[RMDB]
This 177-nucleotide RNA was probed chemically with DMS and 2A3. For DMS the reverse transcriptase was MarathonRT. For DMS, 2,201 sequencing reads were counted. It was measured as part of the RMDB library RFMREP.

RNA sequence: GGGAACGACUCGAGUAGAGUCGAAAAUGUUUUCUUGACAUAAGUCAAAUUGCCAACCUCCACUGGGUGGGUCAAGGUUGAGGUAUAGAAUCCUAUUCGCUCCUGAUAGGAGAAAUUCUAUAUUGCUGAUUAUACUUCUGUUCGCAGAAGUAUAAUCAAAAGAAACAACAACAACAAC
Reactivity to DMS in 0.01 (KOAc 150mM, MgCl2 10mM, bicine 150mM(pH8.5), 24C), signal-to-noise 3, nucleotides 027 to 126: u000g000u010u010u000u010c070u010u000g020a040c030a190u010a100a130g000u000c030a020a050a140u030u020g000c090c000a000a040c010c000u000c030c040a060c050u010g010g000g020u000g010g020g000u000c160a140a010g010g010u000u000g010a120g010g010u000a010u010a010g000a030a030u000c020c010u000a020u000u000c100g000c080u000c050c050u010g000a010u000a020g010g000a240g000a060a110a040u000u000c000u000a020u000a020u000u010g000c130u000
Reactivity to 2A3 in 0.01 (KOAc 150mM, MgCl2 10mM, bicine 150mM(pH8.5), 24C), signal-to-noise 2, nucleotides 027 to 126: u070g030u010u030u060u060c050u020u030g010a030c030a050u300a120a150g010u060c030a030a080a090u140u140g050c000c000a010a010c020c020u050c010c000a020c070u230g290g150g000u040g010g010g020u100c100a040a000g000g010u000u020g030a040g030g020u010a010u000a010g010a000a010u000c010c000u000a020u000u110c020g030c110u060c030c030u060g030a010u020a020g010g010a020g050a020a110a000u030u020c010u000a010u000a010u030u080g050c030u030